[RMDB]
RNA sequence: GGGAACGACUCGAGUAGAGUCGAAAAGGCUAUUUUGAUAUCUCCAUCAGAUAACACCGGCUGGGGUUUGGGUCGUCACAAAAUAUAUGGUGGACUUUAUGGUGGUUUUCUUGGAGGAGCAAGAGAAUACAGUGAAGCAACACCGGUACUAGUAAGGACAGUACUCUAGAUUCGUCUAGAGUACUGUAAAAGAAACAACAACAACAAC
Reactivity to DMS in 0.01 (KOAc 150mM, MgCl2 10mM, bicine 150mM(pH8.5), 24C), signal-to-noise 1, nucleotides 027 to 156: g040g030c040u000a040u010u010u000u000g020a140u010a080u000c060u000c050c060a240u000c000a060g010a090u000a050a080c010a100c020c040g000g020c070u030g020g020g030g000u020u000u010g010g020g020u000c020g000u000c050a050c050a070a090a040a110u010a100u010a050u010g020g040u020g020g010a080c010u000u000u000a020u010g000g010u000g010g010u010u000u010u000c010u000u000g020g000a100g020g010a220g000c020a040a050g010a070g000a020a030u000a080c010a060g010u000g000a070a090g020c030a030a060c020a020c010c020g020g000u000a060c030u010a130g010u000a070a110g010g010
Reactivity to 2A3 in 0.01 (KOAc 150mM, MgCl2 10mM, bicine 150mM(pH8.5), 24C), signal-to-noise 3, nucleotides 027 to 156: g060g010c030u030a050u090u160u100u100g060a070u090a050u090c050u010c040c010a050u050c030a040g030a110u070a110a010c030a030c060c040g050g000c050u020g000g010g030g000u030u130u040g040g010g000u020c020g040u050c010a000c030a080a180a040a010u210a020u060a040u120g060g020u010g000g030a040c000u040u100u070a070u080g140g050u010g010g000u030u080u000u000c020u020u060g080g030a070g020g030a020g050c000a040a010g040a000g020a040a010u070a060c010a020g020u020g030a040a000g000c030a050a030c000a000c060c000g010g000u030a030c010u020a050g150u030a080a010g120g020
Description:
The record gives the reactivity of an RNA of 207 nucleotides to DMS and 2A3. The data come from the RNA Mapping Database (RMDB), library OK3TST. Conditions: 150 mM KOAc, 10 mM MgCl2 and 150 mM bicine (pH 8.5), 24 C.